[RMDB]
RNA sequence: GGGAACGACUCGAGUAGAGUCGAAAAGAUAUGGAUACCCGGUUUCAACAGCGUGGGUUCGGAAACGAACCGCACGACAUGAAACAGGGUAUCCUAAGUCAAACGAUUAGGGUUCGCCCUAAUCGAAGUGGUACGAGUAGUUCGCUACUCGUACCACAAAAGAAACAACAACAACAAC
Reactivity to DMS in 0.01 (KOAc 150mM, MgCl2 10mM, bicine 150mM(pH8.5), 24C), signal-to-noise 1, nucleotides 027 to 126: g000a070u000a090u000g020g000a000u010a030c010c000c010g000g050u000u000u000c000a090a030c260a280g010c000g010u010g000g010g030u000u000c000g030g000a040a160a090c010g010a000a010c000c010g020c000a000c010g020a060c120a300u000g030a000a000a000c000a080g020g000g010u000a000u000c000c000u000a000a060g000u000c010a210a110a270c030g010a000u000u000a040g010g030g030u000u010c300g010c040c000c010u000a000a000u000c000g050a050a050
Reactivity to 2A3 in 0.01 (KOAc 150mM, MgCl2 10mM, bicine 150mM(pH8.5), 24C), signal-to-noise 2, nucleotides 027 to 126: g010a010u070a000u090g000g020a020u010a000c050c040c000g060g100u070u000u010c300a300a230c180a170g030c000g000u000g030g000g000u010u010c000g010g030a010a050a010c020g010a010a000c000c010g020c020a000c000g070a030c050a230u300g000a020a000a000c020a040g050g000g000u000a000u000c010c000u000a000a010g000u020c030a050a040a190c040g020a000u030u030a010g100g060g010u020u090c300g190c010c000c000u010a000a020u000c010g000a090a000

The data come from the RNA Mapping Database (RMDB), library TTRDES. The record gives the reactivity of an RNA of 177 nucleotides to DMS and 2A3. For 2A3, 2,199 sequencing reads were counted. Conditions: 150 mM KOAc, 10 mM MgCl2 and 150 mM bicine (pH 8.5), 24 C. The DMS profile rests on 1,064 reads.